[RMDB]
RNA sequence: GGGAACGACUCGAGUAGAGUCGAAAAGUGCGUACGUAUGUGUGCAUGCACAUGUGUGAGCAUGCACUUGUGCGUGCAGGUGGUAUGCAUGCGUGUGCAUGCCUGUAUGCAUGUGUAUGUGUGUGUGCGUUCCUGUAUCCAUGUGUAUGUGCGUAUGACUUAACCGUAUUUUCGAAUACGGUUAAGUAAAAGAAACAACAACAACAAC
Reactivity to DMS in 0.01 (KOAc 150mM, MgCl2 10mM, bicine 150mM(pH8.5), 24C), signal-to-noise 2, nucleotides 027 to 156: g020u010g010c030g020u000a020c020g030u000a020u010g010u010g040u000g010c020a020u000g010c010a020c010a030u000g000u000g020u010g010a110g020c020a030u000g010c010a000c020u010u000g040u000g020c030g060u000g020c000a040g000g030u010g020g020u000a070u000g010c010a000u000g010c110g040u000g020u000g000c000a010u000g000c000c020u000g020u010a050u010g020c010a020u010g010u000g010u010a010u010g010u000g020u010g020u000g020u000g010c010g020u010u010c060c050u000g010u010a080u000c040c010a100u000g020u000g020u000a050u000g020u000g020c020g010u000a100u010g000
Reactivity to 2A3 in 0.01 (KOAc 150mM, MgCl2 10mM, bicine 150mM(pH8.5), 24C), signal-to-noise 8, nucleotides 027 to 156: g100u070g010c020g020u030a010c010g010u020a020u030g100u010g020u040g010c010a000u020g010c000a010c000a010u020g030u000g020u030g060a040g010c010a020u020g010c010a010c010u060u110g130u100g040c030g010u020g000c000a000g040g110u220g080g080u230a090u070g000c000a000u010g020c010g050u060g000u000g000c000a010u000g000c010c020u140g100u090a060u130g000c010a000u000g000u000g000u010a010u020g030u000g010u010g010u010g010u010g010c010g020u040u040c010c010u030g040u060a060u020c040c020a050u070g030u000g010u060a070u080g030u020g020c050g020u050a050u150g080

Chemical mapping of a 207-nucleotide RNA with DMS and 2A3. The DMS profile rests on 22,441 reads. The RNA was probed in 150 mM KOAc, 10 mM MgCl2 and 150 mM bicine (pH 8.5) at 24 C. For 2A3 the reverse transcriptase was SuperScript II with manganese. The data come from the RNA Mapping Database (RMDB), library OK3TST.